[RMDB]
RNA sequence: GGGAACGACUCGAGUAGAGUCGAAAAUAAGCAAAAGACAACCACCUUUCCCGCUGAUAAUAGCGUUAUCCCUCUGCACUUCGGUAAUAUGAGGGCACAGUAAAUCCCGCAAGGAUGAGAAUGUGAUUAAACAGUUACAGCUUCGGCUGUAACUGAACCCUGACUAUAUCUUCGGAUAUAGUCAGGGAAAAGAAACAACAACAACAAC
Reactivity to DMS in 0.01 (KOAc 150mM, MgCl2 10mM, bicine 150mM(pH8.5), 24C), signal-to-noise 2, nucleotides 027 to 156: u030a110a090g000c020a090a080a030a080g000a200c020a060a090c080c020a140c060c050u000u000u000c020c030c020g030c080u010g020a170u020a060a100u010a080g000c020g030u000u000a080u000c000c000c000u000c010u000g040c090a110c040u000u030c130g100g010u000a020a180u000a100u000g010a040g000g020g040c060a020c080a040g040u000a050a130a090u000c000c020c020g000c190a110a160g030g010a050u010g000a110g020a120a130u000g010u000g000a170u010u010a100a070a130c000a030g000u020u010a000c010a000g000c010u010u000c300g040g030c010u000g020u000a010a010c000u000g000a020a030
Reactivity to 2A3 in 0.01 (KOAc 150mM, MgCl2 10mM, bicine 150mM(pH8.5), 24C), signal-to-noise 4, nucleotides 027 to 156: u130a010a000g060c050a040a100a050a000g110a120c060a050a030c080c040a090c020c050u020u060u030c010c030c010g030c030u020g040a110u060a300a050u070a100g050c040g010u070u100a100u090c010c000c000u000c000u040g000c040a030c080u060u090c170g070g000u030a020a010u130a080u300g010a000g000g020g000c000a000c000a000g000u000a000a000a060u000c010c010c010g130c070a030a030g020g000a000u010g000a000g050a030a010u020g030u010g020a030u040u240a120a120a010c000a000g010u000u000a000c000a010g000c000u000u050c090g100g000c000u000g000u010a000a000c000u000g010a000a000